[RMDB]
RNA sequence: GGGAACGACUCGAGUAGAGUCGAAAAGAAUGACCGCUCAAGAUUACGGAUACUUUGUCAGUAAUCAAUUUAUGUUUUAAUAAAUAAUUUGAGCUAAGGCCAGACGGACAGCCGGGUCAAAAGCCGACGAGUAGUAGGUCUUCGGACCUGCUACUCGAAAAGAAACAACAACAACAAC
Reactivity to 2A3 in 0.01 (KOAc 150mM, MgCl2 10mM, bicine 150mM(pH8.5), 24C), signal-to-noise 4, nucleotides 027 to 126: g080a020a070u150g000a000c000c000g000c000u000c000a010a040g000a010u000u010a000c010g010g020a020u040a120c150u150u200u300g040u030c010a010g000u000a010a000u000c010a020a010u020u010u010a020u010g030u010u240u110u200a110a060u040a040a020a030u120a050a110u060u010u030g010a000g000c050u090a130a030g000g000c000c000a030g020a040c010g000g000a000c000a010g000c000c000g020g000g000u010c000a000a000a000a030g000c000c000g010a030
Reactivity to DMS in 0.01 (KOAc 150mM, MgCl2 10mM, bicine 150mM(pH8.5), 24C), signal-to-noise 3, nucleotides 027 to 126: g000a160a110u020g000a000c010c020g020c000u000c000a020a050g000a030u000u010a000c000g010g020a010u000a080c210u020u020u050g020u000c010a020g010u000a000a000u010c000a090a020u000u000u000a000u000g000u020u020u050u080a100a030u020a010a000a000u020a090a130u060u000u000g000a010g010c020u050a070a030g020g030c000c030a020g000a080c040g000g010a010c000a130g010c000c000g000g020g030u000c010a060a010a060a140g000c020c000g010a300
Chemical mapping of a 177-nucleotide RNA with 2A3 and DMS. It was measured as part of the RMDB library OK1LIB.